[RMDB]
RNA sequence: GGGAACGACUCGAGUAGAGUCGAAAAACACUUUAAGUACACUUCAAUGCGCUCCAGAACAGGAUUGUGAACAAACUGCAAAUUGCUAUAAUUGGUAGACAUGGAAUCCAGCACGUUAAAAGACACGUCCGACAUGUUUUUUUGUUGGGCACUCGCCGCCAGGUAAAUCAUUCGUGAUUUACCUGGCAAAAGAAACAACAACAACAAC
Reactivity to 2A3 in 0.01 (KOAc 150mM, MgCl2 10mM, bicine 150mM(pH8.5), 24C), signal-to-noise 1, nucleotides 027 to 156: a000c070a010c040u200u240u160a120a070g100u160a090c080a010c040u110u090c070a070a050u080g030c030g010c050u080c020c030a020g020a240a080c030a070g070g000a020u130u140g010u060g080a020a000c000a060a080a010c010u020g030c010a040a000a300u260u050g000c030u070a080u030a250a060u110u040g060g000u050a000g040a110c040a030u070g070g000a000a010u020c030c000a010g060c010a000c050g040u080u070a110a210a000a000g000a000c000a020c080g010u000c010c000g010a010c030a090u030g100u000u100u030u030u020u030u030g030u000u020g020g000g120c030a050c020u030c100g000c030c000

This 207-nucleotide RNA was probed chemically with 2A3. For 2A3 the reverse transcriptase was SuperScript II with manganese.